About this RNA
Chemical mapping of a 177-nucleotide RNA with 2A3 and DMS. 2A3 adducts were read by reverse transcription with SuperScript II with manganese. 2A3 is a SHAPE reagent: it acylates the 2'-hydroxyl of flexible nucleotides of all four kinds.
[RMDB]
RNA sequence: GGGAACGACUCGAGUAGAGUCGAAAAUCAUUGUACUUAACAAAAACAUCUAUUUGGACAAUAUAACUAUAUGCACACUCAUCUCCGUCAGUAUAAGUUGUAGGUAUUGGGUCGUCGAUAUCGUCAAUAGAAUAGUUCGGUUCGCCGAACUAUUCUAAAAAGAAACAACAACAACAAC
Reactivity to 2A3 in 0.01 (KOAc 150mM, MgCl2 10mM, bicine 150mM(pH8.5), 24C), signal-to-noise 1, nucleotides 027 to 126: u070c040a040u010u100g030u050a090c010u160u000a100a080c030a000a120a000a050a000c060a030u000c050u120a110u100u120u120g050g000a050c020a100a040u060a010u000a130a010c060u030a000u040a000u300g050c020a000c020a000c020u010c010a070u050c040u020c000c040g070u020c040a030g010u030a040u060a300a110g050u010u060g030u020a040g000g040u030a040u060u130g040g040g000u000c050g050u010c010g060a030u010a040u080c060g000u000c000a000a040
Reactivity to DMS in 0.01 (KOAc 150mM, MgCl2 10mM, bicine 150mM(pH8.5), 24C), signal-to-noise 2, nucleotides 027 to 126: u000c080a130u000u000g000u000a040c080u010u000a090a120c080a030a070a100a130a090c130a090u000c080u000a130u000u000u010g010g010a030c000a040a090u000a050u010a040a070c050u000a100u000a030u000g000c070a040c060a100c040u000c050a050u010c020u000c080c020g020u000c060a090g000u000a090u010a090a070g000u010u000g010u000a040g050g020u000a030u000u000g000g000g010u000c080g020u030c030g020a050u000a000u000c080g000u000c060a060a110